[RMDB]
RNA sequence: GGGAACGACUCGAGUAGAGUCGAAAACUGGCCUGUGUGGAAGUACGUGAGUACUUCACUCUCUACGGGAGUAGAGACACACAGAUCGAGGAGCGAUGUCUUGGAACUACUCCCGUAGUUCACGUAUGACUCACGUCAUACCAAGACGCCAGCCUCGAUGACUAAUGGGAUUCGUCCCAUUAGUCAUAAAAGAAACAACAACAACAAC
Reactivity to 2A3 in 0.01 (KOAc 150mM, MgCl2 10mM, bicine 150mM(pH8.5), 24C), signal-to-noise 4, nucleotides 027 to 156: c000u010g020g010c000c020u030g000u010g010u020g040g020a070a030g020u090a000c010g000u050g040a020g010u120a190c020u080u110c020a050c020u130c010u000c000u010a000c000g020g000g040a020g000u000a000g010a000g040a010c010a000c000a000c000a010g000a000u010c010g020a100g100g090a050g150c030g010a010u020g000u000c000u000u000g000g020a030a030c000u010a000c010u020c000c020c020g000u000a000g010u080u160c160a120c130g100u120a050u130g020a000c000u010c050a010c030g000u000c010a000u020a060c000c000a000a000g000a010c010g000c000c000a000g000c000c000u000c020g040
Reactivity to DMS in 0.01 (KOAc 150mM, MgCl2 10mM, bicine 150mM(pH8.5), 24C), signal-to-noise 2, nucleotides 027 to 156: c020u010g030g010c010c000u000g000u030g020u000g010g000a060a070g000u000a000c000g030u010g000a250g020u010a060c030u010u000c080a080c050u000c080u000c000u010a000c000g030g040g010a220g030u010a000g010a080g010a250c010a010c010a060c010a010g010a060u010c000g000a120g030g020a150g030c000g010a050u000g020u000c000u010u000g030g000a060a210c010u000a010c010u010c080c070c080g010u000a010g020u000u000c020a040c120g020u000a030u000g020a050c010u010c100a150c110g010u000c050a050u010a070c040c000a060a030g010a030c020g040c000c010a060g010c020c010u010c010g010

This 207-nucleotide RNA was probed chemically with 2A3 and DMS. The reactions ran in a buffer of 150 mM KOAc, 10 mM MgCl2 and 150 mM bicine (pH 8.5), at 24 C. For DMS, 3,745 sequencing reads were counted. The 2A3 profile rests on 4,096 reads. For DMS the reverse transcriptase was MarathonRT.